[RMDB]
RNA sequence: GGGAACGACUCGAGUAGAGUCGAAAAUGCACCCGGGUAAGUCCUAUACGGCCAGCUCCCUUCGAAUCCUCCAGGGCUUGAUCGCAGCAAAGGUAGUUGGUUGUAGCGGCGCGAUAUAGUAAGCUUACACAGGCUAUAAGUUCGCUUAUAGCCUGUGAAAAGAAACAACAACAACAAC
Reactivity to DMS in 0.01 (KOAc 150mM, MgCl2 10mM, bicine 150mM(pH8.5), 24C), signal-to-noise 2, nucleotides 027 to 126: u020g000c200a160c020c010c040g030g000g030u010a050a000g050u010c030c000u010a140u010a040c020g010g020c020c000a040g030c010u000c050c000c000u000u000c060g000a130a140u000c020c010u030c040c080a130g000g020g020c030u000u000g000a060u000c110g010c060a090g000c050a050a050a030g040g020u000a060g000u000u000g020g000u000u000g010u000a010g020c100g020g000c010g040c020g000a090u000a060u000a070g010u000a090a090g050c010u000u000a170

Source information
Structure probing data (DMS) for a 177-nucleotide construct. The reactions ran in a buffer of 150 mM KOAc, 10 mM MgCl2 and 150 mM bicine (pH 8.5), at 24 C. Reactivities are rounded to 0.1 and cut off at 0 and 3.